[RMDB]
The record gives the reactivity of an RNA of 177 nucleotides to 2A3 and DMS.
For DMS the reverse transcriptase was MarathonRT.
In probing experiments dimethyl sulfate is read out at A N1 and C N3, which are open when not base-paired.
It was measured as part of the RMDB library TTRDES.
The RNA was probed in 150 mM KOAc, 10 mM MgCl2 and 150 mM bicine (pH 8.5) at 24 C.
2A3 adducts were read by reverse transcription with SuperScript II with manganese.
RNA sequence: GGGAACGACUCGAGUAGAGUCGAAAAGAUAUGGAUUACAGUGGGAGGCGCAGGCUCGGAAACGAGCCUGAACUACGCUCACUAUAAUCCUAAGUCAAAGGAAACUUUGCUUCGGCAAAGUUUCCAACAACCUGUUUAAGUUCGCUUAAACAGGUUGAAAAGAAACAACAACAACAAC
Reactivity to 2A3 in 0.01 (KOAc 150mM, MgCl2 10mM, bicine 150mM(pH8.5), 24C), signal-to-noise 2, nucleotides 027 to 126: g010a000u020a010u100g010g000a000u010u000a020c000a000g010u000g020g120g060a300g260g000c030g000c020a000g010g010c000u020c010g000g000a030a030a030c010g000a010g000c000c010u000g020a000a000c000u060a060c140g120c060u040c020a010c000u000a000u010a010a010u000c000c000u000a020a020g030u020c080a240a060a080g010g000a000a000a000c000u050u000u000g010c020u070u170c300g010g000c000a000a000a020g010u020u010u000c000c010a000a000
Reactivity to DMS in 0.01 (KOAc 150mM, MgCl2 10mM, bicine 150mM(pH8.5), 24C), signal-to-noise 4, nucleotides 027 to 126: g000a040u000a290u020g010g010a020u010u000a000c020a010g030u000g000g020g000a170g020g010c300g020c010a010g000g020c000u000c010g000g010a070a090a120c000g010a010g000c000c000u000g000a020a030c090u020a160c250g000c010u000c000a010c000u000a040u000a000a010u000c000c000u010a030a150g000u010c030a100a160a170g020g000a030a010a020c000u000u000u000g000c000u000u010c290g020g000c000a000a010a030g000u010u000u000c000c010a060a120